Chemical mapping of a 207-nucleotide RNA with 2A3. The 2A3 profile rests on 671 reads. The RNA was probed in 150 mM KOAc, 10 mM MgCl2 and 150 mM bicine (pH 8.5) at 24 C.

RNA sequence: GGGAACGACUCGAGUAGAGUCGAAAAGAAGGUGGGUCAGGGCUCGGACCGCACCAAUUAGAUGUAACUAUUACGAGCCCAUUAAUGGCGUUUUCGCCUAGGUCAGAGCACGCCGUGGCUCGACCGAAAUAAAUAAAUAAUAUCACGGCGGAUAGAAAUACGGUCAUACUUUCGAGUAUGACCGUAUAAAAGAAACAACAACAACAAC
Reactivity to 2A3 in 0.01 (KOAc 150mM, MgCl2 10mM, bicine 150mM(pH8.5), 24C), signal-to-noise 1, nucleotides 027 to 156: g060a090a060g000g000u010g000g000g000u000c070a050g000g000g000c000u000c000g040g000a000c000c010g030c050a000c000c000a000a050u090u030a010g040a110u040g070u200a030a050c090u020a060u240u130a070c050g000a000g000c000c000c000a000u010u110a020a130u090g000g000c000g110u110u020u280u250c020g020c000c000u000a040g060g010u030c160a160g000a000g000c020a020c000g000c000c010g000u000g020g000c030u000c000g000a000c000c000g020a100a000a000u060a010a010a010u010a000a020a050u090a020a010u120a030u170c000a000c000g000g000c110g010g000a020u110a000g140a000a190